This 207-nucleotide RNA was probed chemically with 2A3. Values cover nucleotides 27 to 156. 2A3 adducts were read by reverse transcription with SuperScript II with manganese.
RNA sequence: GGGAACGACUCGAGUAGAGUCGAAAAGUUGAGAGCGUUUAACUUAAGUCUUUUUUAUUAGCUUAAAAAAACUAUAUACAAGUGGUGGUAGUCCGCCACUCUCAGGGGACGCCUUUAGAAGAAGAGGGAAAGGCACUAAGCUUCGGCUUAGUGCCAAGCAUACUUGCAAGUUCGCUUGCAAGUAUGCAAAAGAAACAACAACAACAAC
Reactivity to 2A3 in 0.01 (KOAc 150mM, MgCl2 10mM, bicine 150mM(pH8.5), 24C), signal-to-noise 1, nucleotides 027 to 156: g170u130u090g100a150g000a030g030c010g020u070u100u080a090a050c050u030u040a030a000g010u190c030u130u160u070u100u020u070a170u150u100a130g000c030u060u050a040a040a040a040a030a000a000c170u190a290u080a040u020a160c060a060a030g000u000g050g000u010g030g040u040a030g150u080c030c000g000c030c010a000c000u010c000u000c000a030g000g000g000g010a000c040g000c000c010u040u070u090a070g010a090a000g020a030a000g030a010g000g060g000a070a200a200g000g000c000a000c010u000a000a000g030c000u060u080c300g030g050c000u000u000a000g000u000g000c000c000a000a000